[RMDB]
RNA sequence: GGGAACGACUCGAGUAGAGUCGAAAAACGCAAUAAAGCAAGCAAGGAGACAACAAAAUGCACUAUGAGUUAUCAGCGGCGGCGCGCGCCGCCUUUCUGUCGAAGUAUAGAGACUUUCCUCACUACAUGGAAAACAGGAACUUUACACCGCCGAAGGCGUGAGGUUCCUGUUCGCAGGAACCUCACGAAAAGAAACAACAACAACAAC
Reactivity to 2A3 in 0.01 (KOAc 150mM, MgCl2 10mM, bicine 150mM(pH8.5), 24C), signal-to-noise 2, nucleotides 027 to 156: a000c040g040c040a020a050u150a270a090a020g020c040a000a010g010c030a050a040g030g020a030g040a060c030a070a010c040a050a170a000a040u090g060c040a020c040u110a050u110g020a030g110u090u060a050u060c010a000g020c010g050g000c000g020g000c080g010c060g000c070g030c130c010g030c090c080u010u110u030c030u010g060u040c030g060a070a010g030u060a040u050a110g050a000g000a030c020u060u070u030c000c010u040c020a020c030u140a060c030a070u110g030g010a000a020a110a020c030a020g040g000a010a000c000u020u020u080a050c060a020c020c030g030c020c010g080a050a010g060g010
Reactivity to DMS in 0.01 (KOAc 150mM, MgCl2 10mM, bicine 150mM(pH8.5), 24C), signal-to-noise 2, nucleotides 027 to 156: a100c090g020c030a080a070u010a060a080a080g040c040a080a080g000c050a060a050g000g050a090g000a160c020a060a120c080a080a040a070a160u010g000c000a090c030u000a080u010g020a130g020u010u000a030u010c080a120g020c080g060g000c020g110g040c030g060c190g020c150g040c030c030g030c030c010u000u000u000c020u000g000u000c020g010a200a130g000u000a090u000a070g000a140g010a060c070u000u000u000c050c000u010c010a150c060u000a060c060a050u010g020g020a050a040a070a060c050a060g000g000a010a030c050u000u010u010a070c010a050c080c020g010c020c120g010a080a150g000g020
This 207-nucleotide RNA was probed chemically with 2A3 and DMS. For DMS the reverse transcriptase was MarathonRT. Values cover nucleotides 27 to 156.